Source: RMDB library OK3TST, as collected in RNAgym.
This 207-nucleotide RNA was probed chemically with 2A3 and DMS.
The RNA was probed in 150 mM KOAc, 10 mM MgCl2 and 150 mM bicine (pH 8.5) at 24 C.
DMS adducts were read by reverse transcription with MarathonRT.
[RMDB]
RNA sequence: GGGAACGACUCGAGUAGAGUCGAAAAAGCUGGAGAAGUCACUACUGAGGACUGAAAAUGCGGAGGGUAUAAUAACUGCUGUUGUGUAUCGAGCCUCACUAUUUCCACGCACCGUGCCAAGUGCUGCACGCGUAUCAAUUCAUUUAAUCCUCACAACAUGUUAACAAGUAUUCGUACUUGUUAACAUAAAAGAAACAACAACAACAAC
Reactivity to 2A3 in 0.01 (KOAc 150mM, MgCl2 10mM, bicine 150mM(pH8.5), 24C), signal-to-noise 6, nucleotides 027 to 156: a000g050c040u040g050g010a050g020a100a030g040u070c030a030c090u170a050c070u110g020a040g020g020a040c030u040g030a030a080a040a040u090g020c040g010g020a040g020g030g020u080a060u020a170a070u080a060a030c050u070g030c030u020g040u120u030g030u040g020u020a080u090c040g020a020g020c000c000u020c010a050c010u060a100u030u070u020c040c020a040c050g010c030a030c020c030g000u020g000c020c010a190a070g090u110g080c080u040g000c020a010c010g040c040g010u020a020u070c030a030a030u090u010c010a010u020u040u060a080a060u040c030c030u080c020a060c020a010a090c020
Reactivity to DMS in 0.01 (KOAc 150mM, MgCl2 10mM, bicine 150mM(pH8.5), 24C), signal-to-noise 6, nucleotides 027 to 156: a100g020c050u000g010g010a090g020a090a090g010u000c050a080c070u000a090c080u010g000a100g010g020a110c040u010g010a060a070a080a090u000g010c060g010g000a090g020g010g020u000a070u000a080a120u000a080a110c090u010g030c020u010g020u000u010g020u000g010u010a130u010c070g010a110g010c000c010u000c020a060c070u010a130u000u000u000c020c020a090c070g010c030a080c050c030g020u000g050c020c050a070a160g020u000g030c070u000g010c010a040c020g020c090g040u010a100u000c050a050a120u000u000c050a110u000u000u000a070a070u000c010c010u000c030a050c080a030a120c140